[RMDB]
RNA sequence: GGGAACGACUCGAGUAGAGUCGAAAAGCUCAGGGGUUCGCCCCUGAGCAAAAGAUACCGGUCUCGGUAUCUAAGUCAGUCCGACAGACCACAGGGAACUGAAAAGGGAGGGGUUCGCCCCUCCCAACCAUACUAGCUUGUUCGCAAGCUAGUAUGGAAAAGAAACAACAACAACAAC
Reactivity to 2A3 in 0.01 (KOAc 150mM, MgCl2 10mM, bicine 150mM(pH8.5), 24C), signal-to-noise 1, nucleotides 027 to 126: g020c000u000c000a020g000g040g050g020u030u110c160g150c000c010c000c000u020g010a000g000c000a000a000a000a000g000a000u010a000c000c000g060g150u100c270u140c230g010g000u010a010u000c000u020a060a010g080u040c030a000g000u000c000c030g000a060c070a040g080a030c000c040a010c050a070g170g000g000a130a120c040u030g030a040a020a090a050g000g000g000a010g000g000g000g000u040u070c120g060c000c000c000c000u000c000c000c000a000a000
Reactivity to DMS in 0.01 (KOAc 150mM, MgCl2 10mM, bicine 150mM(pH8.5), 24C), signal-to-noise 2, nucleotides 027 to 126: g020c000u000c000a020g000g050g030g020u000u000c180g010c000c000c000c000u010g000a000g020c010a000a000a060a060g000a000u010a000c000c000g000g010u000c260u020c030g000g000u000a000u000c000u020a060a090g010u020c040a040g000u020c050c020g010a100c050a090g000a230c030c010a070c080a080g000g000g000a060a120c070u000g020a040a040a040a140g020g050g030a020g000g000g010g020u000u000c180g050c010c000c000c000u000c000c000c020a000a030
The record gives the reactivity of an RNA of 177 nucleotides to 2A3 and DMS. Conditions: 150 mM KOAc, 10 mM MgCl2 and 150 mM bicine (pH 8.5), 24 C. It was measured as part of the RMDB library M2PK50. The DMS profile rests on 1,500 reads. For DMS the reverse transcriptase was MarathonRT. For 2A3 the reverse transcriptase was SuperScript II with manganese.